[RMDB]
Source: RMDB library OK1LIB, as collected in RNAgym.
Structure probing data (DMS and 2A3) for a 177-nucleotide construct.
For DMS, 8,768 sequencing reads were counted.
For DMS the reverse transcriptase was MarathonRT.
Reactivities are given for positions 27 through 126.
The 2A3 profile rests on 8,050 reads.
The RNA was probed in 150 mM KOAc, 10 mM MgCl2 and 150 mM bicine (pH 8.5) at 24 C.
RNA sequence: GGGAACGACUCGAGUAGAGUCGAAAAGAAGAGAAGCGCGCGAAUUGGAAACCAGCGAACCCUAUUACGCGCGCAAGGAACCGGGCCUUGGUUCUUUGGAAAGAAUAGAUAAUGUCGCUGGUAAAGAAUACCGAUUAAUGUUCGCAUUAAUCGGUAUAAAAGAAACAACAACAACAAC
Reactivity to DMS in 0.01 (KOAc 150mM, MgCl2 10mM, bicine 150mM(pH8.5), 24C), signal-to-noise 4, nucleotides 027 to 126: g000a200a110g010a180g000a150a210g020c020g030c010g010c020g020a080a100u030u010g010g000a280a150a050c020c000a000g000c000g010a050a070c090c050c030u010a020u000u000a080c030g030c010g000c010g000c000a000a020g010g010a020a010c000c000g010g010g010c080c050u010u030g000g000u010u000c000u000u000u010g000g010a100a090a100g010a060a050u040a030g030a070u030a080a080u020g000u000c000g020c000u010g000g000u020a040a080a080g010a220
Reactivity to 2A3 in 0.01 (KOAc 150mM, MgCl2 10mM, bicine 150mM(pH8.5), 24C), signal-to-noise 7, nucleotides 027 to 126: g110a040a010g070a010g040a100a070g020c000g000c000g000c000g020a020a020u040u020g020g040a090a080a110c000c000a000g000c000g010a070a090c010c000c000u000a020u020u040a070c010g010c000g000c000g000c000a000a000g010g000a010a000c000c000g050g240g060c060c050u140u160g020g000u020u000c010u010u010u030g050g060a120a110a030g060a070a050u140a090g120a060u170a120a070u230g020u040c000g000c000u000g000g000u020a020a050a000g060a020